This 207-nucleotide RNA was probed chemically with 2A3. Conditions: 150 mM KOAc, 10 mM MgCl2 and 150 mM bicine (pH 8.5), 24 C. Source: RMDB library OK3TST, as collected in RNAgym.
[RMDB]
RNA sequence: GGGAACGACUCGAGUAGAGUCGAAAACUUUCUUCACCAAGAGAAUAUAUAAAGCUCGGCCGGACUUGGUGGCUCACGCCUGUAAUCCCAGAACUUUGGGAGGCCGAUGUGGGCAGAUCACGAGGUCAGGAGUUUAAGACCAGCCUGGCCAACAUGAUACUCACCUACGAUUCGUCGUAGGUGAGUAAAAAGAAACAACAACAACAAC
Reactivity to 2A3 in 0.01 (KOAc 150mM, MgCl2 10mM, bicine 150mM(pH8.5), 24C), signal-to-noise 1, nucleotides 027 to 156: c010u000u020u050c010u110u100c030a040c010c000a070a010g020a000g030a100a000u080a040u050a030u180a220a150a020g040c130u100c110g030g050c030c030g030g010a060c000u000u040g000g000u000g070g010c010u020c030a010c050g030c000c000u090g070u150a020a150u010c000c030c000a000g040a230a290c180u300u220u010g000g000g000a000g000g000c010c040g020a030u080g010u000g000g000g000c040a020g000a190u080c000a010c120g080a010g000g040u000c000a000g030g030a000g000u090u130u090a160a070g070a040c010c000a000g050c040c000u000g000g000c010c010a000a010c000a010u000g020a020